Structure probing data (DMS and 2A3) for a 207-nucleotide construct. The RNA was probed in 150 mM KOAc, 10 mM MgCl2 and 150 mM bicine (pH 8.5) at 24 C. Values are in units of 0.01, from 0 to 300, in steps of 10. Reactivities are given for positions 27 through 156. 2A3 adducts were read by reverse transcription with SuperScript II with manganese.

[RMDB]
RNA sequence: GGGAACGACUCGAGUAGAGUCGAAAACCUACUUAGAAGAGGAGUCUCCUGGACGCCCCCGCCCGUUCGAGAUGGGCCUCGUGCCGACGAGGAAUCCGCAGAUGGGAGGAUCAGCCACCGGUGAGGGACGCGAUGGCAAGAGUGGAGGAAAGUUCGAACUUUACAUCUAGUUCGCUAGAUGUAAAGUAAAAGAAACAACAACAACAAC
Reactivity to DMS in 0.01 (KOAc 150mM, MgCl2 10mM, bicine 150mM(pH8.5), 24C), signal-to-noise 2, nucleotides 027 to 156: c030c010u000a130c100u000u010a080g010a070a170g000a120g010g020a190g000u000c040u000c040c050u000g030g010a120c030g040c030c030c050c030c050g000c040c030c020g010u010u000c030g020a090g010a090u000g020g000g030c030c040u010c040g010u020g030c080c080g000a160c030g000a060g000g000a120a040u010c030c030g010c090a110g020a090u000g010g010g000a110g030g000a050u000c050a120g030c020c050a100c060c040g000g030u020g020a080g010g000g000a050c100g010c060g020a070u010g020g030c050a080a090g010a130g020u010g000g020a030g000g010a060a040a110g000u000u000c040g010a120
Reactivity to 2A3 in 0.01 (KOAc 150mM, MgCl2 10mM, bicine 150mM(pH8.5), 24C), signal-to-noise 5, nucleotides 027 to 156: c010c000u010a040c060u080u190a100g040a210a020g020a100g050g010a040g020u020c030u010c060c050u070g060g030a050c040g080c010c000c000c010c010g020c010c030c020g050u040u070c050g010a050g030a230u100g010g030g000c000c010u020c020g030u050g170c050c080g080a090c000g000a010g020g020a030a070u040c020c010g000c040a030g020a080u060g010g000g000a020g000g020a040u070c030a010g040c010c020a040c010c030g060g020u080g030a060g010g030g010a010c020g020c020g050a040u050g010g000c020a030a060g040a020g030u100g020g010a040g010g020a080a050a010g020u050u080c030g030a030